Structure probing data (DMS and 2A3) for a 177-nucleotide construct. The 2A3 profile rests on 2,130 reads. Reactivities are given for positions 27 through 126. The RNA was probed in 150 mM KOAc, 10 mM MgCl2 and 150 mM bicine (pH 8.5) at 24 C.
RNA sequence: GGGAACGACUCGAGUAGAGUCGAAAACGCGCGGUCAGCGCGCGGAUCUCGUCGCGGGUGAAGAGAUCGCGAAUGCGGAUUCUGUCGUUCAUGUCGAUAUCUCCUCCAGCCGCUUCUCGCGCUAGUAGCGCGAGUCCAUGUUCGCAUGGACUCGCGCAAAAGAAACAACAACAACAAC
Reactivity to DMS in 0.01 (KOAc 150mM, MgCl2 10mM, bicine 150mM(pH8.5), 24C), signal-to-noise 2, nucleotides 027 to 126: c040g010c030g010c040g000g010u000c230a150g000c010g020c020g030c000g010g000a100u000c020u000c040g040u000c010g000c060g000g000g010u020g020a060a070g000a090g000a000u000c030g000c010g020a040a080u000g000c060g000g010a070u020u010c100u000g000u010c040g000u000u010c110a110u010g000u030c020g000a030u000a090u000c030u000c090c020u010c060c060a080g000c030c020g010c050u000u000c050u010c020g030c090g020c060u000a090g010u000a160
Reactivity to 2A3 in 0.01 (KOAc 150mM, MgCl2 10mM, bicine 150mM(pH8.5), 24C), signal-to-noise 3, nucleotides 027 to 126: c000g030c000g010c030g050g090u300c100a080g120c020g030c020g010c000g000g000a030u010c030u000c040g080u030c030g000c030g050g080g090u120g020a070a030g030a030g010a050u020c010g010c000g030a110a050u150g000c030g060g040a120u240u110c050u270g190u080c040g020u010u080c060a060u130g110u150c020g020a020u020a160u100c000u030c040c000u030c040c010a110g040c040c040g000c000u030u000c050u020c020g010c010g000c030u100a030g050u070a010